[RMDB]
RNA sequence: GGGAACGACUCGAGUAGAGUCGAAAAGAAUGUGGCACAUAGAUGCCAGCUUUCCACUCCUCAAAAGAGAGAAAUCCUCUGCAAGUGUCAUUGUAGCUGAGGAUUUGUCAGUUUAGACCUGCAGAUGCUAAGAUAGGACUUUCGAGUCCUAUCUUAGAAAAGAAACAACAACAACAAC
Reactivity to DMS in 0.01 (KOAc 150mM, MgCl2 10mM, bicine 150mM(pH8.5), 24C), signal-to-noise 9, nucleotides 027 to 126: g010a050a060u010g020u000g010g010c000a010c020a240u010a170g000a140u000g010c000c000a020g000c030u000u000u000c010c050a130c150u000c040c010u000c120a060a070a100a110g010a100g000a110g000a080a090a060u010c020c020u000c000u000g010c010a040a070g020u010g020u010c070a100u000u010g020u000a080g010c020u000g000a020g010g010a100u000u010u000g000u000c000a050g010u000u000u010a110g000a040c040c010u000g000c040a040g000a090u010g010
Reactivity to 2A3 in 0.01 (KOAc 150mM, MgCl2 10mM, bicine 150mM(pH8.5), 24C), signal-to-noise 7, nucleotides 027 to 126: g020a020a080u130g000u030g050g010c020a010c040a110u270a110g110a080u030g000c000c000a030g060c020u020u010u000c010c020a040c030u020c010c000u070c020a080a080a110a040g120a010g000a000g020a030a090a030u030c010c010u000c000u020g010c030a140a180g050u050g050u300c030a080u100u220g130u210a020g000c010u000g010a020g100g050a050u050u040u070g030u000c010a000g000u020u050u100a040g010a020c000c000u000g000c020a020g020a140u090g040

Notes: An RNA of 177 nucleotides, treated with DMS and 2A3 and read out base by base. For DMS the reverse transcriptase was MarathonRT. The 2A3 profile rests on 11,083 reads. Values cover nucleotides 27 to 126. High DMS reactivity at an A or C suggests that its Watson-Crick edge is free.